[RMDB]
RNA sequence: GGGAACGACUCGAGUAGAGUCGAAAAGGGUUUCCUCCCAGGUCCGAAAUCAACCUCCAUGGUUUCCUGCCUGGGCCUCUUCGCCGGGGGCGCUCCGUCUUCGUUCUUCUUCCUUCUCAACAGUCCGCGCGCUGUAGCUUCGGCUACAGCAAAAGAAACAACAACAACAAC
Reactivity to DMS in 0.01 (KOAc 150mM, MgCl2 10mM, bicine 150mM(pH8.5), 24C), signal-to-noise 6, nucleotides 027 to 129: g030g050g020u000u040u040c010c040u030c050c020c020a050g030g010u050c180c300g030a000a000a000u040c070a080a170c060c040u010c080c060a030u020g000g000u010u030u000c010c070u030g040c020c010u000g020g000g000c050c010u000c000u050u040c110g000c070c080g000g000g000g000g000c050g030c030u030c000c000g030u030c080u040u030c100g020u010u010c000u010u000c000u000u000c020c030u050u030c030u000c040a130a130c110a090g000u050c020c080g030c040g000c110
Reactivity to 2A3 in 0.01 (KOAc 150mM, MgCl2 10mM, bicine 150mM(pH8.5), 24C), signal-to-noise 8, nucleotides 027 to 129: g050g010g000u020u060u030c010c010u050c010c000c000a000g010g020u020c040c020g020a030a010a020u050c020a050a300c030c040u100c030c020a050u050g020g010u000u010u020c010c020u020g020c000c000u010g000g000g000c000c000u060c000u090u050c030g060c040c010g000g000g020g010g000c050g010c020u020c020c010g070u020c000u050u040c030g070u020u010c000u030u000c000u020u050c000c000u030u020c020u000c020a040a150c020a050g070u030c030c020g040c010g010c010
The record gives the reactivity of an RNA of 170 nucleotides to DMS and 2A3. For 2A3 the reverse transcriptase was SuperScript II with manganese. The RNA was probed in 150 mM KOAc, 10 mM MgCl2 and 150 mM bicine (pH 8.5) at 24 C.